[RMDB]
RNA sequence: GGGAACGACUCGAGUAGAGUCGAAAAUGGCGCUACAGCUUACCGCACAAGGAAACAACGUUGUUUCGCAAGUGCUGUUUAUUGCUGAUAGAUUUGCUAUCAUCCGUAACGCGGCAUCCGGUGCUUACACGCUACCGUUUGUUGUGCAGAAUGACCACCGGGUGUACAACUUCGGUUGUACACCCGGAAAAGAAACAACAACAACAAC
Reactivity to DMS in 0.01 (KOAc 150mM, MgCl2 10mM, bicine 150mM(pH8.5), 24C), signal-to-noise 1, nucleotides 027 to 156: u000g050g000c000g020c010u000a190c080a300g000c010u000u000a060c020c020g030c020a020c020a090a230g050g000a040a070a080c000a110a140c140g000u030u000g010u000u000u000c080g060c040a120a190g040u000g020c010u010g020u000u000u000a050u010u000g060c050u000g000a170u000a110g010a190u030u020u000g020c120u020a060u000c020a130u000c030c000g020u010a040a070c070g050c020g020g040c000a000u010c020c020g030g020u020g090c040u010u000a180c130a070c050g020c000u000a100c000c000g000u000u000u000g000u020u000g010u020g030c060a120g010a110a060u100g010a090c060c070a180
Reactivity to 2A3 in 0.01 (KOAc 150mM, MgCl2 10mM, bicine 150mM(pH8.5), 24C), signal-to-noise 3, nucleotides 027 to 156: u000g000g000c010g000c000u020a000c000a000g000c000u000u010a010c000c010g020c000a010c000a040a060g110g000a060a020a000c030a030a070c220g250u160u140g040u010u090u020c150g090c150a140a070g000u000g000c000u000g000u010u140u030a200u120u140g000c000u010g030a250u010a000g030a050u110u110u270g000c010u000a000u070c000a060u020c010c000g030u110a040a020c060g000c000g020g020c010a000u010c020c010g000g010u000g010c000u170u270a100c120a030c220g010c030u130a090c000c020g000u000u030u000g020u000u010g010u020g000c020a030g070a280a070u110g080a040c010c040a030
Chemical mapping of a 207-nucleotide RNA with DMS and 2A3. For 2A3 the reverse transcriptase was SuperScript II with manganese. The reactions ran in a buffer of 150 mM KOAc, 10 mM MgCl2 and 150 mM bicine (pH 8.5), at 24 C. It was measured as part of the RMDB library OK3TST. Reactivities are rounded to 0.1 and cut off at 0 and 3.